Conditions: 150 mM KOAc, 10 mM MgCl2 and 150 mM bicine (pH 8.5), 24 C.
This 207-nucleotide RNA was probed chemically with 2A3 and DMS.
Source: RMDB library OK3TST, as collected in RNAgym.
For DMS the reverse transcriptase was MarathonRT.
The DMS profile rests on 2,412 reads.
[RMDB]
RNA sequence: GGGAACGACUCGAGUAGAGUCGAAAAUUACGAAUCUCUUGGAUACGUGCUUUGGUCGUGUUCAAUCCACGAGACAUGGCCACGAUAUCGAAGUUACUUGCACGCACAGAGAAGUAGGCUGCGUAGUACAACGUUGGGAAGUACACCUUAAAGUAGGCAACCGUAUAGGGUUCGCCCUAUACGGUUGAAAAGAAACAACAACAACAAC
Reactivity to 2A3 in 0.01 (KOAc 150mM, MgCl2 10mM, bicine 150mM(pH8.5), 24C), signal-to-noise 3, nucleotides 027 to 156: u170u030a020c060g040a040a050u030c010u000c000u070u110g140g000a070u060a080c010g000u040g000c020u030u050u030g030g030u020c010g000u030g020u020u130c010a030a060u060c070c030a080c060g070a060g040a040c020a030u000g020g000c040c030a000c000g050a060u050a030u120c050g010a090a000g040u050u090a050c020u040u060g040c030a000c080g000c030a050c040a050g080a010g000a130a060g100u070a020g000g040c030u000g000c040g070u090a040g000u020a140c020a080a040c160g030u020u060g040g020g030a080a050g080u080a020c030a130c030c000u070u060a150a150a060g120u160a090g090g050
Reactivity to DMS in 0.01 (KOAc 150mM, MgCl2 10mM, bicine 150mM(pH8.5), 24C), signal-to-noise 1, nucleotides 027 to 156: u000u030a100c070g050a160a110u000c000u000c020u000u010g020g020a210u000a040c000g030u000g000c010u000u000u000g010g040u000c010g040u000g000u000u000c020a140a190u010c080c010a110c020g050a270g010a090c010a000u000g010g000c000c000a050c120g020a120u000a050u020c080g000a070a060g030u000u010a080c080u000u000g010c020a010c090g010c080a080c030a120g000a050g000a080a130g030u000a080g010g000c010u000g000c020g010u000a170g070u000a090c030a080a070c070g020u020u010g040g000g000a060a110g010u000a040c070a060c010c080u000u000a070a070a090g000u000a070g000g030